[RMDB]
RNA sequence: GGGAACGACUCGAGUAGAGUCGAAAAUUCAGCGAACAGAAGAGCUCCCUCCUCCGGAGAGAGAAGACCAUAGCGAUAGGGGGAGAUGCUAGGAGUAGGAGGCGACCGAAGCGAGGGGGAAAGUAAAUGGGACGCCACUUCGGUGGCGUCAAAAGAAACAACAACAACAAC
Reactivity to 2A3 in 0.01 (KOAc 150mM, MgCl2 10mM, bicine 150mM(pH8.5), 24C), signal-to-noise 2, nucleotides 027 to 129: u030u050c030a080g040c040g100a030a000c000a060g100a080a000g010a070g000c010u080c020c000c000u020c000c010u000c030c020g000g010a010g000a020g000a000g000a070a000g070a000c000c020a010u060a020g080c000g060a110u220a180g050g000g000g000g000a050g000a000u100g010c030u060a010g000g020a010g020u130a000g000g000a000g000g010c010g020a020c000c000g000a000a040g040c070g000a030g000g010g000g000g070a000a000a000g100u190a020a030a050u140g020g020
Reactivity to DMS in 0.01 (KOAc 150mM, MgCl2 10mM, bicine 150mM(pH8.5), 24C), signal-to-noise 2, nucleotides 027 to 129: u000u020c020a070g010c040g030a050a000c060a060g040a090a000g020a090g050c030u000c040c030c010u040c000c030u020c060c140g000g050a100g030a110g050a010g000a140a040g000a010c020c040a170u050a170g070c110g000a070u040a070g090g050g000g010g040a020g120a100u080g040c090u090a120g000g040a030g010u060a020g040g040a020g060g000c110g020a000c010c000g010a050a020g030c000g070a140g000g000g050g040g000a110a050a140g030u000a030a040a100u050g030g030